Source information
Conditions: 150 mM KOAc, 10 mM MgCl2 and 150 mM bicine (pH 8.5), 24 C. This 177-nucleotide RNA was probed chemically with DMS and 2A3. Values cover nucleotides 27 to 126. For 2A3, 6,620 sequencing reads were counted.
RNA sequence: GGGAACGACUCGAGUAGAGUCGAAAAUGGAUCAACAACGUUCACAAAGAUUGUCAACAAAUGGAACACAGCGCUGAUUGGUCUCAUGACGUACUAUCGAGAAGCGGUUGUAAAUACCCAGGAGCUCACUUAGCGUAGAAUUCGUUCUACGCUAAGUAAAAGAAACAACAACAACAAC
Reactivity to DMS in 0.01 (KOAc 150mM, MgCl2 10mM, bicine 150mM(pH8.5), 24C), signal-to-noise 9, nucleotides 027 to 126: u000g000g010a040u000c020a040a040c050a040a040c060g010u000u000c120a110c160a080a110a140g010a100u010u010g010u010c110a060a090c110a060a090a080u000g010g010a100a090c080a070c150a060g010c050g010c020u000g000a140u000u010g000g010u000c020u010c060a050u000g010a170c070g010u000a060c040u000a070u010c030g000a070g010a070a090g010c070g010g000u000u000g010u000a040a060a080u000a080c020c010c020a120g010g010a100g010c070u000c100
Reactivity to 2A3 in 0.01 (KOAc 150mM, MgCl2 10mM, bicine 150mM(pH8.5), 24C), signal-to-noise 6, nucleotides 027 to 126: u060g020g010a040u030c010a020a040c000a020a010c020g070u060u050c060a030c060a140a100a040g090a180u100u150g070u100c040a050a050c030a040a200a090u090g060g010a060a000c050a010c010a080g000c030g000c030u060g010a300u030u030g040g010u010c010u030c060a040u080g020a010c030g040u050a040c030u040a030u050c040g020a020g020a130a020g110c060g060g000u030u010g040u070a060a090a060u080a060c020c000c010a030g070g050a030g010c020u020c040
It was measured as part of the RMDB library OK2TST.